[RMDB]
RNA sequence: GGGAACGACUCGAGUAGAGUCGAAAAAUCGCGCGAUCGUAAUAUGCGCAUAUUAUAUAGCAUCGUAUAGCUAUAGCAUAUGCGCGCAUUAGCUAUACGGCUACGUAGCAUCGCGAUAUCGUAGCGCCGUCGUGGAUGUGUUCGCACAUCCACGACGAAAAGAAACAACAACAACAAC
Reactivity to DMS in 0.01 (KOAc 150mM, MgCl2 10mM, bicine 150mM(pH8.5), 24C), signal-to-noise 1, nucleotides 027 to 126: a100u000c100g010c010g050c010g000a120u010c060g030u010a030a040u000a020u010g000c000g050c120a010u000a000u000u000a060u000a030u000a000g000c010a100u010c280g030u000a210u000a070g020c000u000a010u000a130g000c140a020u000a020u000g000c130g010c020g040c100a010u000u000a090g020c060u010a050u010a100c100g020g000c000u000a000c020g000u000a080g040c030a020u000c020g030c010g000a050u010a090u000c060g000u000a030g000c020g020c140
Reactivity to 2A3 in 0.01 (KOAc 150mM, MgCl2 10mM, bicine 150mM(pH8.5), 24C), signal-to-noise 1, nucleotides 027 to 126: a000u070c020g000c000g000c020g030a050u170c010g040u030a060a000u080a110u140g000c020g000c000a000u010a000u030u020a010u000a010u010a020g000c030a070u220c180g090u170a060u070a120g000c020u000a000u000a000g010c000a040u010a070u130g040c000g030c010g010c010a000u010u010a000g040c000u030a020u010a100c080g080g000c000u000a020c000g010u010a010g000c010a040u040c020g000c000g000a000u000a010u080c050g010u030a010g000c000g030c100
Structure probing data (DMS and 2A3) for a 177-nucleotide construct. It was measured as part of the RMDB library OK2TRN. DMS adducts were read by reverse transcription with MarathonRT.